[RMDB]
RNA sequence: GGGAACGACUCGAGUAGAGUCGAAAAAUCUACUACUACCAAAAUCUUAUUAAGUUACGAAAAACGACUGAAAUCAUCACAACAGGUAAUUAUCGCCUGUUAUUACCUAAAGAUGAAGCGAUUUUCAUGGCCAUUAAUAGUUCGCUAUUAAUGGCCAAAAAGAAACAACAACAACAAC
Reactivity to DMS in 0.01 (KOAc 150mM, MgCl2 10mM, bicine 150mM(pH8.5), 24C), signal-to-noise 1, nucleotides 027 to 126: a020u020c050u000a000c020u000a150c130u000a100c130c040a030a130a040a060u030c010u000u010a090u040u000a060a070g010u000u020a240c040g000a070a000a080a060a110c040g030a120c020u000g000a020a070a060u000c010a080u030c100a170c170a070a080c100a000g000g020u000a060a100u000u000a140u010c250g020c020c080u000g000u000u000a010u010u000a020c060c040u010a070a080a070g000a010u000g000a060a040g040c060g000a060u000u000u010u000c000a180